Chemical mapping of a 207-nucleotide RNA with DMS and 2A3. For DMS, 4,255 sequencing reads were counted.
RNA sequence: GGGAACGACUCGAGUAGAGUCGAAAAACGGGAAAACGAGAACCGGAGAGGCGCAUGCCUACGAUAACGCACACGUAGUGGCGGUGAUGCCCUGAAGGGUGAGAGAACGACAGGUAAUGGUUCCCCAGUAGUACUAGCAGGUCACCGCGAGAUACGCCCUAAGUAAUGGUUUCGACCAUUACUUAGGAAAAGAAACAACAACAACAAC
Reactivity to DMS in 0.01 (KOAc 150mM, MgCl2 10mM, bicine 150mM(pH8.5), 24C), signal-to-noise 2, nucleotides 027 to 156: a070c070g020g000g020a050a060a080a100c070g030a180g000a100a100c010c010g000g000a080g000a140g000g020c060g010c080a090u000g010c040c010u000a040c060g020a120u010a080a120c070g000c070a110c070a120c030g070u000a100g020u010g000g020c060g050g030u000g010a120u000g040c000c020c020u010g020a070a090g000g020g050u010g020a070g000a100g020a070a090c030g010a230c060a050g010g010u010a090a050u000g020g020u000u000c000c000c000c020a130g030u000a060g030u010a060c000u010a140g010c000a030g050g000u000c030a050c040c020g020c020g010a060g000a130u000a070c040g010c070
Reactivity to 2A3 in 0.01 (KOAc 150mM, MgCl2 10mM, bicine 150mM(pH8.5), 24C), signal-to-noise 4, nucleotides 027 to 156: a000c040g030g000g020a050a050a040a060c070g010a050g000a120a030c020c030g030g000a070g020a010g070g000c040g000c070a050u170g030c000c020u050a030c010g020a020u070a090a070c060g040c050a030c010a010c050g000u050a010g040u030g140g010c010g000g010u020g000a020u100g010c000c000c020u110g080a180a100g000g060g000u080g000a130g000a020g020a030a010c040g090a010c070a030g080g010u130a110a100u180g060g000u020u040c000c020c000c000a010g110u160a010g000u010a070c030u030a030g080c050a040g100g000u020c020a000c020c000g000c000g010a040g010a050u110a020c040g040c010